The data come from the RNA Mapping Database (RMDB), library TTRDEL. This 177-nucleotide RNA was probed chemically with 2A3 and DMS. 2A3 adducts were read by reverse transcription with SuperScript II with manganese. The reactions ran in a buffer of 150 mM KOAc, 10 mM MgCl2 and 150 mM bicine (pH 8.5), at 24 C.

[RMDB]
RNA sequence: GGGAACGACUCGAGUAGAGUCGAAAAGAUAUGGACCAGCUUUUGACGAAAGUAGUCGGAAACGACUAUACUUUCGAUAAGCUGUGUCCUAAGUCAAAACUGCGUGCAAGUUCGCUUGCACGCAGAACUAUAAUUGUUGGUUCGCCAACAAUUAUAGAAAAGAAACAACAACAACAAC
Reactivity to 2A3 in 0.01 (KOAc 150mM, MgCl2 10mM, bicine 150mM(pH8.5), 24C), signal-to-noise 6, nucleotides 027 to 126: g020a010u040a020u110g000g010a000c000c000a010g010c030u100u100u110u180g300a200c070g000a000a000a000g010u010a010g000u000c010g000g020a050a040a010c010g010a010c000u020a070u070a200c000u020u000u010c050g020a020u010a010a000g000c010u000g080u080g000u040c000c000u000a030a000g010u010c010a000a020a160a220c010u010g000c010g000u000g000c010a000a000g000u050u100c260g090c130u010u000g000c000a010c010g000c000a000g000a000a000
Reactivity to DMS in 0.01 (KOAc 150mM, MgCl2 10mM, bicine 150mM(pH8.5), 24C), signal-to-noise 6, nucleotides 027 to 126: g000a040u000a270u010g010g000a010c000c000a010g010c000u000u000u010u010g010a220c140g010a010a010a020g010u000a010g010u010c000g010g000a090a070a130c000g000a010c000u000a090u010a040c040u000u000u000c000g010a110u000a010a010g000c000u000g000u020g010u000c000c000u000a010a080g000u000c010a090a070a100a180c010u000g000c000g010u000g000c010a010a010g010u000u010c240g020c000u000u000g000c000a000c010g010c000a000g010a010a100
Record summary
For 2A3, 19,821 sequencing reads were counted.